[RMDB]
RNA sequence: GGGAACGACUCGAGUAGAGUCGAAAAAAUAUUGUCGGAGUGCUUGCUUGUGCUGAAAAUAUGAUAAAUGAAGCAUCAAUGAAGCCAGAUGAUGUAUUUACAGCAUUAAGUGGUGAAACUGUAGAAGAUUUAGCACUAAUUUCGAUUAGUGCUAAAUAAAAGAAACAACAACAACAAC
Reactivity to DMS in 0.01 (KOAc 150mM, MgCl2 10mM, bicine 150mM(pH8.5), 24C), signal-to-noise 8, nucleotides 027 to 126: a050a050u040a050u010u010g030u010c020g010g000a170g020u020g010c020u000u010g010c020u000u010g010u010g000c010u000g000a120a030a050a050u010a060u020g010a120u040a060a080a080u020g010a160a080g000c010a030u020c050a060a060u040g000a100a090g010c060c060a070g010a110u020g000a040u010g000u000a030u010u000u000a070c040a030g000c030a020u020u020a050a050g020u010g000g020u010g010a080a050a090c060u000g010u020a040g010a120a080g000
Reactivity to 2A3 in 0.01 (KOAc 150mM, MgCl2 10mM, bicine 150mM(pH8.5), 24C), signal-to-noise 8, nucleotides 027 to 126: a020a000u300a040u050u100g110u070c050g060g060a090g050u080g050c040u110u070g030c010u020u050g030u000g000c010u010g040a030a020a020a000u150a060u080g180a080u100a140a120a030u110g050a150a030g020c020a020u050c040a050a200u200g100a080a030g070c080c040a040g050a080u100g020a010u050g000u030a090u000u060u050a030c010a010g010c010a000u150u180a150a000g010u030g040g040u050g080a170a040a030c050u040g020u080a030g050a160a030g020
The record gives the reactivity of an RNA of 177 nucleotides to DMS and 2A3.
The reactions ran in a buffer of 150 mM KOAc, 10 mM MgCl2 and 150 mM bicine (pH 8.5), at 24 C.
DMS adducts were read by reverse transcription with MarathonRT.
2A3 adducts were read by reverse transcription with SuperScript II with manganese.
Source: RMDB library OK1LIB, as collected in RNAgym.